RNA sequence: GGGAACGACUCGAGUAGAGUCGAAAAUGAAAGAGAGAGAGAGAAAAAGGCAUGGGAUGGGAUGGGAUAAAAACUCUCAAAAACAUCCCAAACAUCCCAAACAUCCCAAGGGAGACAUCCCAAAAAAUCAUACAUUUAACUUCGGUUAAAUGUAUGAAAAAGAAACAACAACAACAAC
Reactivity to DMS in 0.01 (KOAc 150mM, MgCl2 10mM, bicine 150mM(pH8.5), 24C), signal-to-noise 2, nucleotides 027 to 126: u010g020a030a090a040g000a070g040a010g000a050g000a070g040a150g050a030a050a130a020a090g000g040c120a090u020g000g000g000a040u010g010g040g040a220u000g000g020g000a070u030a050a110a040a090a060c120u010c150u010c050a020a050a040a040a120c160a080u010c000c010c000a030a160a100c060a040u000c010c020c010a020a180a080c070a020u000c030c020c010a090a100g000g000g000a060g000a130c260a030u000c000c000c010a000a000a060a050a040a060